[RMDB]
RNA sequence: GGGAACGACUCGAGUAGAGUCGAAAACCCUAGCCAGGGAUUGUCUUCCUCAAGUUUCUUGAUUUUCUUCUUCGCCUUCCGGAGCUCCUUCUCGAGAUCCUCAGCUUUUUUCCUUGAGUUCACCCACCUGCUGAUUAUAGUUCGCUAUAAUCAGCAGAAAAGAAACAACAACAACAAC
Reactivity to DMS in 0.01 (KOAc 150mM, MgCl2 10mM, bicine 150mM(pH8.5), 24C), signal-to-noise 2, nucleotides 027 to 126: c020c000c010u010a090g030c090c060a120g000g000g010a070u000u010g010u010c050u010u000c030c000u000c130a120a150g010u010u010u010c020u000u020g000a120u010u000u000u000c020u010u000c020u000u000c060g000c080c010u000u000c030c050g010g020a200g010c030u000c030c040u030u010c050u000c050g000a130g010a060u000c030c030u000c060a070g010c040u000u000u010u000u010u000c030c000u000u000g000a090g010u010u010c070a190c000c010c010a090c230
Reactivity to 2A3 in 0.01 (KOAc 150mM, MgCl2 10mM, bicine 150mM(pH8.5), 24C), signal-to-noise 1, nucleotides 027 to 126: c030c000c020u020a000g050c010c060a030g020g000g070a070u050u090g030u060c010u070u040c010c010u020c020a050a080g050u010u140u000c040u030u120g100a160u160u000u110u040c050u100u000c010u020u090c020g030c020c000u040u020c030c020g050g030a080g000c030u000c010c010u050u040c020u040c020g040a060g040a030u020c000c000u040c050a020g010c000u090u090u000u020u040u060c000c020u080u010g040a020g040u010u110c040a060c030c000c010a050c020